[RMDB]
RNA sequence: GGGAACGACUCGAGUAGAGUCGAAAAAUCAAGGUUUCGGUACAAGCUCAACCAGUUCCACAAGAAAUGGUUACUCGUCUCCAUGGAAACCGUGUUGCCGUCUCACCAAUUGUCACAGUUGAGCCAAGACUGGAUCACCUUUCGAGGUGAUCCAGUCAAAAGAAACAACAACAACAAC
Reactivity to DMS in 0.01 (KOAc 150mM, MgCl2 10mM, bicine 150mM(pH8.5), 24C), signal-to-noise 1, nucleotides 027 to 126: a010u000c000a070a030g010g000u000u000u000c000g000g040u000a110c110a090a110g000c100u000c270a020a020c060c000a070g000u010u010c060c040a140c250a150a300g010a060a020a020u000g000g000u000u000a070c010u000c030g000u000c060u000c010c040a250u040g030g000a000a070a020c010c010g060u010g050u000u000g000c010c040g000u000c040u010c020a110c030c070a060a090u000u000g020u010c020a020c110a040g010u010u000g010a040g000c170c050a020a110